An RNA of 177 nucleotides, treated with 2A3 and DMS and read out base by base. Source: RMDB library RFM100, as collected in RNAgym. For 2A3, 1,023 sequencing reads were counted. High 2A3 reactivity points to a flexible backbone, as in loops and unpaired stretches. The RNA was probed in 150 mM KOAc, 10 mM MgCl2 and 150 mM bicine (pH 8.5) at 24 C. DMS adducts were read by reverse transcription with MarathonRT.
RNA sequence: GGGAACGACUCGAGUAGAGUCGAAAAAUACGAGUAGCUGCGCUCCCCUGCUAGAACCUCCAAACAAGCUCUCAAGGUCCAUUUGUAGGAGAACGUAGGGUAGUCAAGCUUCCAAGACUCCAGACACUGCCUAGUCAGAUUUCGAUCUGACUAGGCAAAAAGAAACAACAACAACAAC
Reactivity to 2A3 in 0.01 (KOAc 150mM, MgCl2 10mM, bicine 150mM(pH8.5), 24C), signal-to-noise 2, nucleotides 027 to 126: a000u210a010c090g050a020g070u050a000g000c010u030g020c000g030c090u000c020c010c000c000u000g020c000u020a050g040a010a040c040c000u050c000c050a080a110a030c000a170a060g040c010u000c000u010c160a070a050g030g000u120c030c000a040u050u120u030g010u020a020g000g010a050g010a020a000c030g010u030a000g000g000g050u000a000g000u060c000a020a000g010c000u000u020c000c000a000a070g040a110c030u010c050c060a050g030a030c020a010c070
Reactivity to DMS in 0.01 (KOAc 150mM, MgCl2 10mM, bicine 150mM(pH8.5), 24C), signal-to-noise 1, nucleotides 027 to 126: a030u010a000c100g000a130g000u000a000g010c060u000g000c070g000c000u010c000c000c000c100u090g050c020u000a050g000a260a010c090c000u020c000c000a000a000a020c130a120a290g090c100u000c050u160c160a110a300g000g000u000c020c120a040u160u000u000g010u000a180g000g060a110g000a090a120c150g000u000a000g000g000g040u020a020g000u040c210a160a110g120c070u000u000c000c000a200a070g000a170c120u020c040c000a040g000a030c090a070c280